An RNA of 177 nucleotides, treated with 2A3 and DMS and read out base by base. For DMS, 1,177 sequencing reads were counted. Source: RMDB library OK1LIB, as collected in RNAgym. Values are in units of 0.01, from 0 to 300, in steps of 10. For DMS the reverse transcriptase was MarathonRT. Conditions: 150 mM KOAc, 10 mM MgCl2 and 150 mM bicine (pH 8.5), 24 C. 2A3 adducts were read by reverse transcription with SuperScript II with manganese. The 2A3 profile rests on 1,063 reads.
[RMDB]
RNA sequence: GGGAACGACUCGAGUAGAGUCGAAAAGACGGAAAAGAUCGAACCUAAGAAGAUCAGGCAGUGUGAGCCGAAUCCUAGGGCUCCUAGAGACGCAUCGUCUGAUGCGAAAUAAACACUAACGUCGAAACAUCCUCACGGUGUUCGCACCGUGAGGAUGAAAAGAAACAACAACAACAAC
Reactivity to 2A3 in 0.01 (KOAc 150mM, MgCl2 10mM, bicine 150mM(pH8.5), 24C), signal-to-noise 2, nucleotides 027 to 126: g020a040c010g040g000a070a070a060a050g090a010u060c030g000a040a140c100c020u080a090a020g040a200a000g000a200u010c030a000g030g010c040a000g000u000g020u070g050a000g010c020c000g000a010a040u110c030c000u050a060g110g010g000c020u000c000c020u140a080g010a000g000a020c030g090c000a000u000c000g300u020c300u300g000a000u050g010c030g000a030a070a140u130a000a030a000c020a050c100u090a030a040c000g080u070c000g030a060a000a000
Reactivity to DMS in 0.01 (KOAc 150mM, MgCl2 10mM, bicine 150mM(pH8.5), 24C), signal-to-noise 1, nucleotides 027 to 126: g000a090c010g000g000a060a040a090a080g000a020u000c060g000a160a050c260c150u070a190a090g010a050a080g000a000u000c000a020g010g100c260a020g000u000g040u000g000a080g000c000c000g000a050a130u030c000c000u000a190g000g000g020c000u000c000c040u000a170g000a130g000a010c040g000c000a000u000c000g030u030c100u000g000a000u000g000c020g040a000a120a040u040a130a300a010c010a070c110u000a210a010c070g000u000c010g000a110a050a120